Structure probing data (DMS and 2A3) for a 177-nucleotide construct. It was measured as part of the RMDB library OK1LIB. The DMS profile rests on 1,539 reads. The RNA was probed in 150 mM KOAc, 10 mM MgCl2 and 150 mM bicine (pH 8.5) at 24 C. Values are in units of 0.01, from 0 to 300, in steps of 10. DMS adducts were read by reverse transcription with MarathonRT.
[RMDB]
RNA sequence: GGGAACGACUCGAGUAGAGUCGAAAAGUGUCCGAAGGCGAAACAACAUCGGGUGAUGAAACAGAGGGAGAAGAAGACUUUACCCAUUUACCUUCAGAGGAAGAACAGCAAUCGCUGCCAUCCACACUCUAUUCUCUCGCUUCGGCGAGAGAAUAGAAAAAGAAACAACAACAACAAC
Reactivity to DMS in 0.01 (KOAc 150mM, MgCl2 10mM, bicine 150mM(pH8.5), 24C), signal-to-noise 2, nucleotides 027 to 126: g060u040g010u010c000c000g000a030a060g000g000c050g000a040a040a060c090a160a080c140a050u030c040g000g000g000u080g000a020u000g000a060a040a090c090a060g020a010g000g000g000a280g000a010a020g020a040a100g000a040c060u010u000u030a080c000c000c070a070u000u060u000a100c150c150u000u000c100a090g000a070g000g000a070a010g090a080a130c040a000g000c120a140a160u000c030g010c050u000g000c010c030a140u020c010c070a030c050a040c030
Reactivity to 2A3 in 0.01 (KOAc 150mM, MgCl2 10mM, bicine 150mM(pH8.5), 24C), signal-to-noise 4, nucleotides 027 to 126: g080u060g050u010c020c020g020a020a020g050g030c060g030a040a030a010c110a030a060c030a120u110c070g050g000g050u070g010a030u030g040a060a040a020c040a040g080a070g060g070g010a070g020a100a010g030a030a010g030a040c010u080u050u090a070c000c000c040a010u050u080u110a110c030c020u050u040c050a040g010a050g190g040a120a050g020a080a010c020a020g000c010a010a190u140c130g000c030u030g020c000c000a030u000c010c000a030c000a030c060